[RMDB]
RNA sequence: GGGAACGACUCGAGUAGAGUCGAAAAAUCAAACAUUUCAGAUGCCGCUCUGACUUCUUGCUUCACUGGAAUGGCUUCAUCUUGAAGCAAUACUCCAACACCAGAUUUGCGAGCCAUCUCGUUUAUGAAAUGACUCGUGAUUCGUCACGAGUCAUUUAAAAGAAACAACAACAACAAC
Reactivity to 2A3 in 0.01 (KOAc 150mM, MgCl2 10mM, bicine 150mM(pH8.5), 24C), signal-to-noise 7, nucleotides 027 to 126: a000u210c110a070a060a050c060a110u060u150u070c050a040g030a070u070g070c050c040g030c060u040c050u080g090a100c020u070u010c040u060u070g040c080u080u070c020a030c110u030g000g050a060a040u100g110g020c000u010u030c030a140u070c060u100u230g010a000a000g000c000a000a020u100a090c060u000c020c040a040a020c030a030c050c000a030g030a210u050u060u220g080c030g000a000g000c020c010a040u040c020u000c030g070u060u070u090a110u110g090
Reactivity to DMS in 0.01 (KOAc 150mM, MgCl2 10mM, bicine 150mM(pH8.5), 24C), signal-to-noise 2, nucleotides 027 to 126: a080u010c040a080a130a190c080a100u010u050u010c040a070g020a060u000g000c060c170g000c020u000c040u020g020a010c080u000u000c030u000u000g010c070u020u030c070a080c180u000g000g000a030a020u000g000g010c010u000u000c000a050u020c230u030u020g000a080a000g000c020a060a040u020a070c120u000c030c000a070a120c150a110c060c040a000g010a030u010u000u010g010c010g010a130g000c010c020a050u010c020u000c070g010u040u030u010a040u020g010